[RMDB]
RNA sequence: GGGAACGACUCGAGUAGAGUCGAAAAGAUAUGGACCACCCAUGGGAGCUUGUCGGAAACGACAAAGCGAAGAACAUGGCCGUGGUCCUAAGUCAAACACCUGUGCUCGUUCGCGAGCACAGGUGAAGGAUAUUCUGACGUUCGCGUCAGAAUAUCCAAAAGAAACAACAACAACAAC
Reactivity to 2A3 in 0.01 (KOAc 150mM, MgCl2 10mM, bicine 150mM(pH8.5), 24C), signal-to-noise 1, nucleotides 027 to 126: g010a010u080a030u100g010g010a020c000c010a000c000c000c000a020u030g080g070g000a040g000c000u000u020g000u000c010g000g020a070a050a090c000g000a010c010a070a200a020g010c010g100a120a020g050a040a030c020a000u020g050g040c220c150g040u000g000g000u000c020c000u010a000a000g000u040c020a050a000a100c010a010c000c000u030g010u010g000c000u000c010g100u090u100c300g000c020g120a000g050c010a000c000a000g000g020u010g000a010a000
Reactivity to DMS in 0.01 (KOAc 150mM, MgCl2 10mM, bicine 150mM(pH8.5), 24C), signal-to-noise 2, nucleotides 027 to 126: g050a020u000a290u000g000g000a030c010c020a040c010c000c000a010u010g030g000g000a140g030c000u010u000g010u000c010g020g000a060a080a240c000g010a010c000a000a040a040g040c000g040a090a120g000a120a190c030a010u000g020g060c230c220g030u020g000g010u000c000c000u000a000a040g010u010c010a150a070a200c040a000c000c000u010g020u000g010c000u000c020g000u010u000c170g030c060g000a030g020c000a010c000a000g000g010u000g000a020a090